[RMDB]
Overview:
Chemical mapping of a 177-nucleotide RNA with DMS and 2A3. For 2A3, 5,009 sequencing reads were counted. Conditions: 150 mM KOAc, 10 mM MgCl2 and 150 mM bicine (pH 8.5), 24 C. It was measured as part of the RMDB library M2PK50.
RNA sequence: GGGAACGACUCGAGUAGAGUCGAAAAGUUGUAAACUUCGGUUUACAACAAAUAAGAGAGAAAAGCUCUCCAUCGCUCUUCCAAGCGACAAGGGAACCAAAAAAACCCAGCUCUUCGGAGCUGGGAACGGAUAUAUAUAGUUCGCUAUAUAUAUCCGAAAAGAAACAACAACAACAAC
Reactivity to DMS in 0.01 (KOAc 150mM, MgCl2 10mM, bicine 150mM(pH8.5), 24C), signal-to-noise 3, nucleotides 027 to 126: g010u000u000g010u000a000a010a010c000u000u020c170g000g010u000u000u000a010c000a020a000c000a040a070a040u020a090a130g000a060g010a060g020a160a070a110a240g020c030u000c000u000c020c120a110u000c010g020c020u000c040u000u000c090c100a140a090g010c020g020a020c160a060a090g000g000g000a140a090c090c120a000a000a080a060a140a120a070c010c010c000a000g000c000u000c000u000u010c180g020g010a010g010c000u000g000g000g000a010a010
Reactivity to 2A3 in 0.01 (KOAc 150mM, MgCl2 10mM, bicine 150mM(pH8.5), 24C), signal-to-noise 3, nucleotides 027 to 126: g010u020u010g010u010a020a000a010c000u040u060c180g070g010u000u010u000a000c000a000a010c000a010a020a000u110a050a020g040a010g000a000g050a070a220a070a150g110c000u000c000u000c010c000a080u040c000g010c010u030c050u170u000c030c010a020a020g010c000g020a020c030a030a050g020g010g020a030a030c030c030a020a000a010a040a030a060a130c000c000c010a000g000c000u000c000u010u050c230g110g020a000g000c000u000g010g000g000a000a000